[RMDB]
RNA sequence: GGGAACGACUCGAGUAGAGUCGAAAAGAGAAGUAAACUGUUAGGCGCCAGCGGCUUGACCCGCUGUGGCCGCGGCGGCCUAGUUGAGACUGAAACGGCGGGUCAGAGCUCGGAGAGACCGAGCAGAAAUAAUCAGCAGUUUCGACUGCUGAUUAUUAAAAGAAACAACAACAACAAC
Reactivity to 2A3 in 0.01 (KOAc 150mM, MgCl2 10mM, bicine 150mM(pH8.5), 24C), signal-to-noise 5, nucleotides 027 to 126: g080a010g050a130a040g060u230a130a120a050c070u090g070u140u060a020g020g000c000g010c010c020a040g000c000g010g000c010u030u040g040a090c000c000c010g000c000u020g010u030g030g000c000c000g000c000g010g000c010g040g120c010c000u030a020g000u000u060g020a040g030a050c040u050g010a040a020a020c020g010g010c010g010g000g000u010c010a050g010a020g030c000u010c000g040g000a200g000a010g050a190c000c010g000a000g000c000a000g010a000
Reactivity to DMS in 0.01 (KOAc 150mM, MgCl2 10mM, bicine 150mM(pH8.5), 24C), signal-to-noise 4, nucleotides 027 to 126: g010a120g000a120a090g020u010a060a070a100c110u030g000u010u010a020g010g000c010g000c000c000a040g050c020g020g000c020u000u000g000a060c000c000c000g010c010u000g030u020g000g020c000c000g020c020g010g000c010g000g000c000c000u010a030g010u020u000g000a060g000a300c080u020g010a070a050a040c010g020g010c000g000g010g010u020c040a060g010a130g000c000u000c000g000g000a300g020a220g000a150c000c000g030a020g020c010a040g000a040
An RNA of 177 nucleotides, treated with 2A3 and DMS and read out base by base. 2A3 adducts were read by reverse transcription with SuperScript II with manganese. The reactions ran in a buffer of 150 mM KOAc, 10 mM MgCl2 and 150 mM bicine (pH 8.5), at 24 C. The 2A3 profile rests on 4,984 reads.